[RMDB]
RNA sequence: GGGAACGACUCGAGUAGAGUCGAAAAGACGAGGAAAUUCGUUUCCCUCGCCAUUAUUAAAUCACGCUGAAUCACCAGAAGCACGUGAUUCCUCCUAGAAAGAUCAGAGAAGGGACUCGUACACCUCGCAGCACAACGUAUUCGUACGUUGUGCUGCAAAAGAAACAACAACAACAAC
Reactivity to DMS in 0.01 (KOAc 150mM, MgCl2 10mM, bicine 150mM(pH8.5), 24C), signal-to-noise 1, nucleotides 027 to 126: g000a110c010g040a000g020g000a020a030a190u000u000c050g000u020u000u010c050c000c000u000c070g010c060c020a020u000u000a060u000u000a000a090a020u010c020a040c020g010c190u000g020a090a130u000c100a050c130c110a150g000a100a040g090c080a090c020g000u000g020a080u000u000c140c060u000c010c020u020a050g000a090a060a160g020a060u000c140a000g000a040g000a130a050g010g000g000a060c070u000c050g020u000a070c200a090c010c080u000c140
Reactivity to 2A3 in 0.01 (KOAc 150mM, MgCl2 10mM, bicine 150mM(pH8.5), 24C), signal-to-noise 1, nucleotides 027 to 126: g010a010c020g010a020g000g030a000a110a010u090u020c050g000u050u020u000c030c030c010u000c010g060c010c010a150u180u130a060u050u090a230a000a030u020c020a020c030g000c110u050g070a070a030u050c050a040c160c050a020g020a220a000g110c030a050c040g010u000g010a000u020u000c000c010u000c010c010u110a020g130a050a070a040g080a120u210c080a000g040a010g040a130a040g030g000g020a040c010u030c050g010u010a020c050a040c060c030u060c020